[RMDB]
RNA sequence: GGGAACGACUCGAGUAGAGUCGAAAACCCAGUUCCGGGGCCGUUGACUGGAUCCGAAGCCUCUAGAAGGAUAAUAUAGGCACUCCAUACCCUACUCCGACUCAAUACGUCCCCGUCGUACAGAAUGCAAGGGCAUCCCUGUUCGCAGGGAUGCCAAGUUGCCUAAAUUCUUCGGAAUUUAGGCAACAAAAGAAACAACAACAACAAC
Reactivity to 2A3 in 0.01 (KOAc 150mM, MgCl2 10mM, bicine 150mM(pH8.5), 24C), signal-to-noise 1, nucleotides 027 to 156: c000c010c010a000g060u130u000c010c040g090g010g000g040c020c010g010u050u070g000a060c050u010g050g010a080u120c000c010g040a040a000g000c040c030u070c000u070a130g030a250a090g090g000a050u110a210a080u150a080u100a140g000g000c040a010c030u080c020c010a120u080a260c040c030c000u040a080c080u110c050c000g050a030c040u000c050a060a110u080a160c020g000u010c010c010c010c010g030u060c000g030u010a030c040a070g110a270a060u110g040c110a040a020g060g000g000c000a000u010c020c000c000u040g000u040u040c150g030c060a000g000g020g010a000u000g010c000c000a000a000